[RMDB]
RNA sequence: GGGAACGACUCGAGUAGAGUCGAAAAAAAGAGCGGUCUCAGGAGCCCCGGGGCAACUCAGACCGAGCGGGGUCUUGACCAGUGGCGAGCGCCCUGUUCAGACAGGAGUAAUCCCAGCAGAAACAGGCAUAUAAAUCGGGUUCGCCCGAUUUAUAUGAAAAGAAACAACAACAACAAC
Reactivity to DMS in 0.01 (KOAc 150mM, MgCl2 10mM, bicine 150mM(pH8.5), 24C), signal-to-noise 1, nucleotides 027 to 126: a040a080a060g020a100g030c010g010g010u010c000u010c180a020g010g000a300g010c020c020c080c210g000g030g000g000c030a040a170c010u000c050a020g010a050c010c000g040a040g020c000g000g000g000g010u000c010u020u000g000a020c020c020a000g010u010g040g020c010g010a220g040c170g010c020c000c000u000g010u000u000c040a070g020a050c040a120g020g030a120g010u020a060a130u000c000c000c000a090g010c110a130g010a090a050a080c110a080g000g000
Conditions: 150 mM KOAc, 10 mM MgCl2 and 150 mM bicine (pH 8.5), 24 C. This 177-nucleotide RNA was probed chemically with DMS. Values cover nucleotides 27 to 126.